[RMDB]
RNA sequence: GGGAACGACUCGAGUAGAGUCGAAAAAGAAAGCACGACACCAUACUAGCGGCGAACUUGACAGGGUAGCUGUCGCGGUUCUCCGCAAGCCUGCUGUGUGGGCCUACGAAGACACGAUGCUCCCCUGCCAGUACGGGCCGUUCGCGGCCCGUACUGGAAAAGAAACAACAACAACAAC
Reactivity to 2A3 in 0.01 (KOAc 150mM, MgCl2 10mM, bicine 150mM(pH8.5), 24C), signal-to-noise 1, nucleotides 027 to 126: a000g210a000a040a080g020c090a000c000g230a100c000a120c000c020a020u100a140c000u060a140g020c000g000g000c020g020a000a000c010u010u090g000a050c000a010g000g100g100u180a030g240c010u050g000u030c000g000c130g090g030u050u030c030u000c000c000g000c000a000a000g000c000c000u130g000c180u000g100u000g000u180g130g000g000c000c010u090a050c070g060a090a000g060a000c090a010c080g000a000u080g050c000u050c010c000c000c000u040g030